[RMDB]
RNA sequence: GGGAACGACUCGAGUAGAGUCGAAAAGACCUGAUGCAGUGUCGUCUGGCAGGUGUCAGGUUGAAGCCGUGGGCUGAGUGGUCAAGUUCAUGCACGAUGUGAACGCGUGACCAGAUGAUCACGCAUGGCGUGAUUCAACGUUCGCGUUGGAUUACGCAAAAGAAACAACAACAACAAC
Reactivity to DMS in 0.01 (KOAc 150mM, MgCl2 10mM, bicine 150mM(pH8.5), 24C), signal-to-noise 9, nucleotides 027 to 126: g000a020c000c000u000g010a000u000g000c010a040g010u010g030u000c000g020u050c190u060g010g000c010a030g010g010u000g010u010c000a010g010g000u000u000g000a070a050g020c100c010g030u000g010g000g010c020u000g000a300g020u010g010g000u000c020a050a100g000u000u000c010a010u000g000c080a150c210g010a120u020g010u010g000a030a020c040g010c140g010u010g000a020c010c010a050g000a130u010g000a050u000c000a000c010g010c030a160u030g000
Reactivity to 2A3 in 0.01 (KOAc 150mM, MgCl2 10mM, bicine 150mM(pH8.5), 24C), signal-to-noise 9, nucleotides 027 to 126: g020a010c000c000u000g000a000u000g000c010a070g220u000g000u010c050g080u060c080u190g010g000c000a010g000g030u000g000u000c000a000g010g000u000u020g010a010a000g030c040c010g020u030g000g020g000c020u020g040a040g130u080g030g010u010c020a030a020g000u000u000c000a000u020g010c040a020c130g090a160u080g020u010g030a030a000c030g010c070g080u020g000a030c000c000a010g010a070u050g000a010u020c010a000c010g020c020a040u100g080